RNA sequence: GGGAACGACUCGAGUAGAGUCGAAAAGUAACUGAACGCUCAGUUAAAACUCGCUUUCGCUACGGCUCCGCACCUUAAGUGCUUAACCUUGCUACUUAACGUAACUCGUUGGCCCGUUCUACAAAAAAAAUGACGCUCCGUUCGCGGAGCGUCAUUUAAAAGAAACAACAACAACAAC
Reactivity to 2A3 in 0.01 (KOAc 150mM, MgCl2 10mM, bicine 150mM(pH8.5), 24C), signal-to-noise 1, nucleotides 027 to 126: g020u010a040a020c000u010g000a160a010c110g060c130u070c020a000g000u030u020a000a000a000a060c010u040c020g040c040u000u000u130c000g020c000u000a000c020g000g030c000u010c020c020g000c000a060c060c000u080u120a040a000g000u010g060c000u090u060a070a010c050c000u000u090g000c000u070a120c000u140u020a050a070c030g040u010a060a030c000u000c040g080u110u050g090g020c000c000c130g000u000u000c030u080a180c070a020a150a090a000a000

Structure probing data (2A3) for a 177-nucleotide construct. Conditions: 150 mM KOAc, 10 mM MgCl2 and 150 mM bicine (pH 8.5), 24 C. For 2A3 the reverse transcriptase was SuperScript II with manganese. Reactivities are given for positions 27 through 126.